RNA sequence: GGGAACGACUCGAGUAGAGUCGAAAACGCAGAGGGUUCUGAUAACAAAGAACCUAGAUAGCCGCAUCGGUAUUAUAGGAUGUAGUCGGUGAGCCGGAAUGCCUGCAUCGUAAGCCUAUAAUUAAAUUUAAGUGUAAUCACUUCGGUGAUUACACAACAAGAUUGAGUAGUUCGCUACUCAAUCUUGAAAAGAAACAACAACAACAAC
Reactivity to 2A3 in 0.01 (KOAc 150mM, MgCl2 10mM, bicine 150mM(pH8.5), 24C), signal-to-noise 4, nucleotides 027 to 156: c060g010c030a040g070a110g100g000g010u000u000c020u030g060a110u100a270a040c030a040a090a020g010a000a000c000c000u010a020g020a090u090a010g040c040c040g060c090a090u150c110g070g010u070a020u090u030a050u060a040g020g030a010u030g050u120a030g100u100c020g010g000u020g000a000g020c050c030g080g030a100a030u080g030c020c000u030g060c010a020u000c000g050u050a060a040g000c000c020u020a040u040a070a060u080u150a110a080a120u160u180u110a150a040g000u000g000u000a000a000u000c000a000c000u050u040c140g030g000u000g000a000u000u000a000c000a000c000a000a000
Reactivity to DMS in 0.01 (KOAc 150mM, MgCl2 10mM, bicine 150mM(pH8.5), 24C), signal-to-noise 2, nucleotides 027 to 156: c070g050c040a100g030a250g000g030g030u000u000c000u000g000a190u010a130a250c300a120a270a020g000a020a000c010c000u000a070g010a240u010a110g010c010c020g000c040a090u020c080g040g000u000a020u000u000a040u000a030g010g000a100u000g010u000a150g040u000c010g020g020u010g000a070g040c060c030g030g010a120a120u000g040c010c000u000g010c030a020u000c020g000u000a110a120g010c030c000u000a020u000a020a010u000u000a050a040a120u010u000u010a050a170g010u000g010u000a010a020u000c000a020c000u000u000c250g020g010u000g010a000u010u000a000c000a010c000a020a100

Chemical mapping of a 207-nucleotide RNA with 2A3 and DMS. It was measured as part of the RMDB library M2RFPK. The RNA was probed in 150 mM KOAc, 10 mM MgCl2 and 150 mM bicine (pH 8.5) at 24 C. The DMS profile rests on 4,181 reads.